Structure probing data (2A3 and DMS) for a 207-nucleotide construct.
Reactivities are given for positions 27 through 156.
The DMS profile rests on 1,523 reads.
The RNA was probed in 150 mM KOAc, 10 mM MgCl2 and 150 mM bicine (pH 8.5) at 24 C.
The data come from the RNA Mapping Database (RMDB), library RNAMAK.
RNA sequence: GGGAACGACUCGAGUAGAGUCGAAAAGGGGUCUCGAGGGUCGGAGGUGUAGCUUUUGACGAGCUGAAGCCUCCACGGCUCGAUAAGCUACACUCCCCACCCGACCCAUCGAGACGGAGGCACCCAAAACUGGGUAUAACUUCGGUUAUACCCAGAAGGUUAUUUUAACGUUCGCGUUAAAAUAACCAAAAGAAACAACAACAACAAC
Reactivity to 2A3 in 0.01 (KOAc 150mM, MgCl2 10mM, bicine 150mM(pH8.5), 24C), signal-to-noise 3, nucleotides 027 to 156: g020g010g020g000u010c000u000c010g000a020g000g000g000u000c010g000g000a030g010g000u000g000u000a010g000c020u110u170u220u300g210a160c080g000a000g000c000u020g020a100a010g010c000c040u040c040c050a000c000g010g040c000u000c010g050a100u090a260a050g000c000u010a000c010a000c010u020c040c010c010c000a020c000c010c010g000a000c000c010c030a130u010c000g000a000g000a010c010g000g010a000g000g000c000a040c000c000c000a010a100a030a070c000u000g010g000g000u010a000u000a000a000c010u040u040c180g040g000u000u010a000u030a020c000c000c000a000g000a000a010
Reactivity to DMS in 0.01 (KOAc 150mM, MgCl2 10mM, bicine 150mM(pH8.5), 24C), signal-to-noise 1, nucleotides 027 to 156: g020g000g030g020u000c030u000c000g010a060g000g050g030u000c040g050g010a170g000g050u040g010u000a040g010c010u060u000u000u020g000a140c190g010a070g070c000u020g000a080a150g000c030c030u000c000c020a100c040g030g000c030u010c000g010a150u010a010a040g030c010u000a020c020a030c020u020c300c040c020c080a300c070c010c000g040a000c020c010c020a040u000c010g000a000g010a030c100g000g000a040g040g020c020a080c060c010c040a040a070a150a300c050u000g020g000g010u000a000u000a000a000c000u000u000c300g000g000u020u000a020u000a000c000c010c000a000g000a000a080